[RMDB]
RNA sequence: GGGAACGACUCGAGUAGAGUCGAAAACGGGGUAUAUGUUCCAUAAAUAUGCCGCGAAUACAGAAACCGUGAAUACGGAAUGGUAAUUUAUAUGGGAUUAUAGGGGAUACGUUCCUAGGUGACAAAAAUUACCAGUGCAGUUCGCUGCACUGGUAAUAAAAGAAACAACAACAACAAC
Reactivity to DMS in 0.01 (KOAc 150mM, MgCl2 10mM, bicine 150mM(pH8.5), 24C), signal-to-noise 2, nucleotides 027 to 126: c160g010g020g010g010u000a040u000a020u030g020u010u000c030c060a070u010a050a100a050u000a070u010g040c020c010g010c190g020a120a130u010a170c230a130g000a080a130a160c010c010g000u000g020a170a080u000a030c000g000g000a080a090u000g000g010u000a060a060u000u000u000a080u040a040u010g020g010g020a030u000u020a070u020a060g000g000g040g000a100u020a160c060g000u000u000c010c000u000a040g030g030u000g000a090c090a080a060a050a070
Reactivity to 2A3 in 0.01 (KOAc 150mM, MgCl2 10mM, bicine 150mM(pH8.5), 24C), signal-to-noise 1, nucleotides 027 to 126: c030g080g000g020g080u060a030u060a030u220g080u120u000c030c000a010u030a020a150a010u030a020u080g060c000c000g170c060g070a140a080u180a060c080a060g130a090a090a090c020c010g040u060g000a130a260u300a040c000g010g040a010a070u060g000g000u060a130a080u070u100u170a200u010a010u030g000g000g080a000u160u000a070u210a090g000g020g000g010a010u080a180c000g020u020u000c040c000u000a020g160g040u110g070a040c020a030a240a000a000